[RMDB]
RNA sequence: GGGAACGACUCGAGUAGAGUCGAAAAGCUGAUUUCGAUCAGCACAAAGCGUACUACAAAUCCAGCCUAUAAUCUGUGACUCCCCACCUUGUCCCAAAUAGGACAAGAGGUCACAGGUAGGCUGAGUUUGUAUCGCACCAUACAUCUUCGGAUGUAAUAACCUUACAUGAUUCGUCAUGUAAGGUUAAAAAGAAACAACAACAACAAC
Reactivity to 2A3 in 0.01 (KOAc 150mM, MgCl2 10mM, bicine 150mM(pH8.5), 24C), signal-to-noise 9, nucleotides 027 to 156: g000c000u000g010a010u040u110u250c270g100a030u010c010a000g060c020a010c060a030a100a020g010c010g040u100a130c040u010a000c050a000a000a010u040c010c000a000g010c000c010u090a090u040a180a270u110c010u010g000u000g010a000c010u100c040c050c000c000a030c000c010u000u000g000u010c000c010c030a140a300a190u290a120g000g000a000c000a000a000g010a000g000g000u000c000a000c000a000g000g000u010a000g000g000c000u000g000a010g000u000u000u010g020u030a050u300c000g000c000a010c000c030a020u060a020c000a000u000c010u040u050c260g120g010a010u010g010u030a060a050
Reactivity to DMS in 0.01 (KOAc 150mM, MgCl2 10mM, bicine 150mM(pH8.5), 24C), signal-to-noise 4, nucleotides 027 to 156: g010c000u000g010a020u000u000u010c250g020a060u000c000a000g000c000a070c080a060a080a090g020c020g020u000a060c070u000a040c020a000a030a030u000c020c000a040g010c000c010u000a070u000a230a110u000c010u000g020u000g010a050c010u010c220c050c040c070a300c180c020u010u000g000u010c000c010c010a060a180a180u000a040g010g010a010c000a030a010g000a180g000g000u000c020a010c000a000g000g000u000a000g030g020c000u010g000a010g000u000u010u000g000u000a010u010c040g000c020a110c040c020a210u000a030c010a010u000c000u000u010c280g040g000a020u000g020u000a030a210